[RMDB]
This 207-nucleotide RNA was probed chemically with 2A3 and DMS. High 2A3 reactivity points to a flexible backbone, as in loops and unpaired stretches.

RNA sequence: GGGAACGACUCGAGUAGAGUCGAAAACUGCGAUCUUCGGAUCGCAGAAAAAUCCUAAGUCAGCCAGUUGUCAGUACGAUAAGGAUCGGAAACGAUCCUUUUGACGUACUUGGAUUUACAGCUGAUAUGGAAAAAAAAGGUUGCUUCGGCAACCUAAGUUCUAUGUGGUAUUCGUACCACAUAGAACAAAAGAAACAACAACAACAAC
Reactivity to 2A3 in 0.01 (KOAc 150mM, MgCl2 10mM, bicine 150mM(pH8.5), 24C), signal-to-noise 4, nucleotides 027 to 156: c000u000g000c000g000a000u000c000u040u050c160g070g000a010u010c010g000c010a020g000a000a000a010a010a020u010c020c010u040a130a010g020u000c010a000g020c020c020a090g010u030u000g010u040c000a010g000u000a000c010g020a030u010a050a000g010g010a000u000c010g020g040a110a080a000c020g000a000u000c000c050u000u000u010u040g050a030c000g000u000a000c010u040u070g060g010a010u140u140u160a030c000a000g000c000u010g010a000u020a050u060g010g090a080a050a040a000a000a050a040a030g000g000u000u000g000c010u050u080c230g110g000c000a000a000c000c000u010a040a040
Reactivity to DMS in 0.01 (KOAc 150mM, MgCl2 10mM, bicine 150mM(pH8.5), 24C), signal-to-noise 2, nucleotides 027 to 156: c000u000g000c000g020a030u010c030u030u000c300g040g000a030u000c020g030c020a010g020a010a050a050a080a140u000c000c000u010a070a300g030u000c000a010g000c020c000a200g030u000u000g000u010c000a070g030u000a000c000g020a160u000a040a000g000g000a010u000c000g010g000a160a150a270c020g010a000u000c010c000u000u000u000u000g040a270c100g010u000a000c020u000u000g040g010a070u000u000u010a070c060a080g000c000u010g010a010u020a300u000g000g020a000a000a000a060a030a060a090a080g000g010u000u000g020c020u000u010c300g010g010c010a010a030c020c010u000a010a020
For 2A3 the reverse transcriptase was SuperScript II with manganese. For DMS, 4,099 sequencing reads were counted. The reactions ran in a buffer of 150 mM KOAc, 10 mM MgCl2 and 150 mM bicine (pH 8.5), at 24 C. Source: RMDB library RNAMAK, as collected in RNAgym.